Description:
An RNA of 177 nucleotides, treated with DMS and read out base by base. Source: RMDB library TTRINS, as collected in RNAgym. For DMS, 1,052 sequencing reads were counted. The reactions ran in a buffer of 150 mM KOAc, 10 mM MgCl2 and 150 mM bicine (pH 8.5), at 24 C. For DMS the reverse transcriptase was MarathonRT.
RNA sequence: GGGAACGACUCGAGUAGAGUCGAAAAGAUAUGGAGAGUGGGAGCUAUAUCAUGACGACGAUCAGUGAGCUUCGGAAACGAAGCUCACUGGGAGUCAUGGUAUAGCGAAGAACACUCUCCUAAGUCAGAGAGAAUAUCUCUUCGGAGAUAUUCUCUCAAAAGAAACAACAACAACAAC
Reactivity to DMS in 0.01 (KOAc 150mM, MgCl2 10mM, bicine 150mM(pH8.5), 24C), signal-to-noise 1, nucleotides 027 to 126: g010a090u030a300u000g000g000a000g040a050g040u000g000g020g000a300g010c000u000a000u000a020u000c020a000u000g000a020c000g000a200c300g000a110u000c030a010g010u010g010a040g010c010u000u000c000g000g000a080a070a300c020g030a000a030g010c000u010c000a000c010u000g000g010g020a080g040u000c020a000u000g000g010u010a000u000a000g000c000g000a070a090g000a140a180c000a000c000u000c010u000c010c030u000a010a020g010u000c040a220